[RMDB]
RNA sequence: GGGAACGACUCGAGUAGAGUCGAAAAUUGCCGAUCGGUAUGGAUGCCACCGUGACGGCUCAAUCACACAAGUGCCAACGAUAACGACGCGCUCGCUAUUGCUGCGUAACUGACGGCCUGACGGUCUAAAACAGAUUCGUGUUCGCACGAAUCUGAACCGCUAAAGCAAGUUCGCUUGCUUUAGCGGAAAAGAAACAACAACAACAAC
Reactivity to 2A3 in 0.01 (KOAc 150mM, MgCl2 10mM, bicine 150mM(pH8.5), 24C), signal-to-noise 3, nucleotides 027 to 156: u130u120g030c010c010g020a050u030c020g000g050u090a070u130g100g050a090u120g050c030c010a020c000c020g010u010g050a060c080g000g010c050u050c070a040a090u120c020a080c030a040c010a150a060g030u020g060c010c000a060a030c020g020a060u040a070a020c020g040a010c030g020c030g030c170u020c010g000c020u010a020u090u080g000c020u020g000c050g040u010a080a020c020u070g030a020c060g000g020c010c000u050g070a040c090g000g040u000c050u100a060a070a040a020c000a000g010a020u000u000c000g000u000g010u040u070c090g020c090a000c010g000a000a000u000c000u000g000a000a000